An RNA of 177 nucleotides, treated with DMS and 2A3 and read out base by base.
[RMDB]
RNA sequence: GGGAACGACUCGAGUAGAGUCGAAAACGAGCGCAGCCGGCGACCUCAGCAUCCGUGACAUCCACGUCAACAGUGCGCAAGGCACAGCGCGCAGAGAUGCGCCGCAUCGGUCUGGAGUCGCCCGCCGCACCAUAUGAUGAUUCGUCAUCAUAUGGUGAAAAGAAACAACAACAACAAC
Reactivity to DMS in 0.01 (KOAc 150mM, MgCl2 10mM, bicine 150mM(pH8.5), 24C), signal-to-noise 9, nucleotides 027 to 126: c080g000a130g020c130g020c090a060g020c020c210g010g010c010g000a030c020c020u000c020a040g010c300a050u010c020c030g020u000g010a040c020a130u010c180c200a110c160g000u000c010a080a130c140a110g010u000g010c000g010c180a100a090g010g010c030a020c040a100g010c030g010c000g010c000a020g010a180g000a150u000g000c010g010c070c080g020c030a080u010c040g010g010u000c000u000g000g000a070g000u000c010g000c000c000c110g020c020c040g000
Reactivity to 2A3 in 0.01 (KOAc 150mM, MgCl2 10mM, bicine 150mM(pH8.5), 24C), signal-to-noise 9, nucleotides 027 to 126: c030g020a020g080c060g000c100a030g020c030c030g000g000c010g000a010c000c010u020c010a010g000c030a070u060c020c040g050u040g010a020c010a060u100c100c080a180c160g030u010c020a080a090c040a130g010u010g010c040g040c300a260a080g250g000c020a010c010a030g010c010g000c000g000c020a000g010a000g000a060u020g010c010g030c070c090g010c030a060u100c020g000g020u010c000u010g010g000a020g000u010c000g000c010c010c000g000c000c010g000
DMS adducts were read by reverse transcription with MarathonRT. For 2A3 the reverse transcriptase was SuperScript II with manganese. For DMS, 30,951 sequencing reads were counted. The RNA was probed in 150 mM KOAc, 10 mM MgCl2 and 150 mM bicine (pH 8.5) at 24 C.